[RMDB]
RNA sequence: GGGAACGACUCGAGUAGAGUCGAAAAUACGAUAAUCUUCAUAUCAACAGAUUCAUUUCCACCACCAUUAUACAUGUUUACCAACACAACCUGAGGACAUGUAAUUUUAUUGAAUUGAAGAUAUUCAGGCGGCUACUAAGUUCGCUUAGUAGCCGCCAAAAGAAACAACAACAACAAC
Reactivity to 2A3 in 0.01 (KOAc 150mM, MgCl2 10mM, bicine 150mM(pH8.5), 24C), signal-to-noise 1, nucleotides 027 to 126: u300a050c060g000a000u140a220a070u010c000u100u000c000a010u090a030u030c010a000a000c000a030g160a060u030u100c000a020u040u210u000c020c020a020c030c000a000c060c030a200u100u220a130u060a030c000a000u020g000u020u030u080a070c000c000a050a130c070a020c100a290a020c030c000u130g040a060g060g000a020c000a000u000g000u020a020a010u000u190u000u150a260u000u010g020a030a000u000u010g000a030a030g000a000u010a130u010u050c000a000